Annotation
An RNA of 177 nucleotides, treated with DMS and 2A3 and read out base by base. Source: RMDB library OK2TRN, as collected in RNAgym. The RNA was probed in 150 mM KOAc, 10 mM MgCl2 and 150 mM bicine (pH 8.5) at 24 C. Reactivities are given for positions 27 through 126.

RNA sequence: GGGAACGACUCGAGUAGAGUCGAAAAGGAGAUUGGCAGUUCCCGCUGGUCACGGAAGAUGAAGCGGUCGUGAAGAUUGUCAAUUCCGACCUAACUGUCUCUCAUUGCUACACCAAUGUCCUCAGUCAACUGUGUUAUGCUUCGGCAUAACACAGUUAAAAGAAACAACAACAACAAC
Reactivity to DMS in 0.01 (KOAc 150mM, MgCl2 10mM, bicine 150mM(pH8.5), 24C), signal-to-noise 3, nucleotides 027 to 126: g000g010a070g030a050u010u000g000g010c040a100g000u000u010c050c010c010g010c090u000g020g010u000c150a110c130g010g010a080a040g010a080u000g000a090a080g010c100g020g000u010c050g010u010g010a090a070g000a110u000u010g010u000c200a060a120u010u000c010c000g010a050c000c020u000a080a070c040u000g010u010c020u000c030u010c050a090u010u010g000c080u010a060c200a060c060c020a030a050u000g000u000c010c020u010c140a130g010u010c130
Reactivity to 2A3 in 0.01 (KOAc 150mM, MgCl2 10mM, bicine 150mM(pH8.5), 24C), signal-to-noise 3, nucleotides 027 to 126: g050g010a030g010a050u100u100g060g000c070a020g010u050u020c010c000c000g000c020u030g050g000u110c040a040c120g070g010a090a030g040a060u100g050a130a000g050c020g070g000u030c040g110u210g170a040a030g050a080u150u170g110u170c010a010a060u020u000c010c020g010a040c000c000u010a100a020c020u020g030u010c000u000c000u010c030a040u040u150g000c040u050a040c020a030c040c020a010a040u050g070u090c000c000u080c020a080g060u100c030